[RMDB]
RNA sequence: GGGAACGACUCGAGUAGAGUCGAAAAAAUAGCGGGUCAAGGUACAACGCAGAGAGAUAGGCUCAUCCCAAGUUCUCUUCGGAGUACCAAGACUUCGGUACAGAAGAGAUUCCGACUCUUCAUAGAACCUUCAUAUUUGCUUCGGCAAAUAUGAAGGAAAAGAAACAACAACAACAAC
Reactivity to DMS in 0.01 (KOAc 150mM, MgCl2 10mM, bicine 150mM(pH8.5), 24C), signal-to-noise 1, nucleotides 027 to 126: a070a120u000a100g020c010g000g000g000u000c000a030a300g000g000u000a000c000a020a300c000g010c140a010g000a120g000a020g000a060u000a160g000g000c090u020c300a060u000c230c000c010a140a080g010u010u000c020u000c000u000u000c000g020g000a300g000u000a000c000c000a050a300g000a010c000u030u000c000g000g000u020a090c190a100g000a000a000g000a020g000a030u020u020c020c030g000a190c000u000c020u000u000c010a180u000a090g000a080a120
The record gives the reactivity of an RNA of 177 nucleotides to DMS. The reactions ran in a buffer of 150 mM KOAc, 10 mM MgCl2 and 150 mM bicine (pH 8.5), at 24 C. For DMS the reverse transcriptase was MarathonRT.